[RMDB]
RNA sequence: GGGAACGACUCGAGUAGAGUCGAAAAGGGACGCCUUUAGAAGAAGAGGCUAGGUGGUAUUCCGGUGUGGGAUACUUGGUAAUAUGUAACGCUAAUUGCAUAAGAUUGUAGGACGGAAUUUGCAGUCAAAACGGUCCUGCGUUCGCGCAGGACCGAACGUAACUGUUAGCUUCGGCUAACAGUUACGAAAAGAAACAACAACAACAAC
Reactivity to 2A3 in 0.01 (KOAc 150mM, MgCl2 10mM, bicine 150mM(pH8.5), 24C), signal-to-noise 3, nucleotides 027 to 156: g010g000g010a010c050g000c000c010u090u050u110a220g050a210a030g030a070a010g020a060g040g000c040u030a030g080g050u070g010g020u030a070u030u070c040c020g080g050u170g030u110g030g010g000a020u010a080c010u040u070g040g010u060a070a070u070a110u100g070u050a070a010c050g030c150u090a060a100u050u060g020c010a000u030a090a050g030a080u030u100g000u050a010g010g070a010c060g000g030a020a060u060u020u080g010c010a000g000u050c040a020a050a100a070c010g020g000u000c000c000u000g000c000g000u010u040c210g010c020g000c010a000g000g000a000c000c000g000a000a000
Structure probing data (2A3) for a 207-nucleotide construct. The reactions ran in a buffer of 150 mM KOAc, 10 mM MgCl2 and 150 mM bicine (pH 8.5), at 24 C. For 2A3 the reverse transcriptase was SuperScript II with manganese.